Conditions: 150 mM KOAc, 10 mM MgCl2 and 150 mM bicine (pH 8.5), 24 C. An RNA of 177 nucleotides, treated with 2A3 and DMS and read out base by base. DMS adducts were read by reverse transcription with MarathonRT. For DMS, 144,915 sequencing reads were counted. Reactivities are rounded to 0.1 and cut off at 0 and 3. For 2A3 the reverse transcriptase was SuperScript II with manganese.
RNA sequence: GGGAACGACUCGAGUAGAGUCGAAAACGUAUGAUCCGCGGAAUGCUCUAUAGAUACUCAAACAGCUGAUUUCGGCGCAUCGUCUACGUGCGUUUGUCCGCAACGAUCUGCGGCCGGGCAUGCCCGGGGUGUGUCUUGCUUUCGAGCAGGACGCGCUAAAAGAAACAACAACAACAAC
Reactivity to 2A3 in 0.01 (KOAc 150mM, MgCl2 10mM, bicine 150mM(pH8.5), 24C), signal-to-noise 9, nucleotides 027 to 126: c010g010u020a030u200g020a020u010c020c040g000c010g010g020a040a030u070g020c010u000c020u060a110u050a110g080a050u110a110c040u070c110a080a160a180c070a100g020c030u060g070a180u060u130u170c050g050g000c000g000c010a020u030c030g080u000c020u040a030c020g000u010g000c000g000u000u030u080g050u000c000c000g000c010a030a050c070g030a040u010c010u020g000c000g000g000c000c000g000g000g000c100a120u180g070c000c000c000g000g000
Reactivity to DMS in 0.01 (KOAc 150mM, MgCl2 10mM, bicine 150mM(pH8.5), 24C), signal-to-noise 9, nucleotides 027 to 126: c020g010u010a020u040g010a020u000c040c180g000c010g000g010a060a040u020g000c020u000c040u020a150u020a070g010a100u020a080c160u020c140a080a110a120c270a090g010c040u000g010a170u010u020u020c060g010g000c010g000c130a040u010c120g010u010c070u020a040c170g010u000g000c030g010u000u010u020g010u000c010c000g000c010a070a090c230g000a050u010c040u000g000c000g000g010c000c010g000g000g000c040a070u010g010c010c000c000g000g000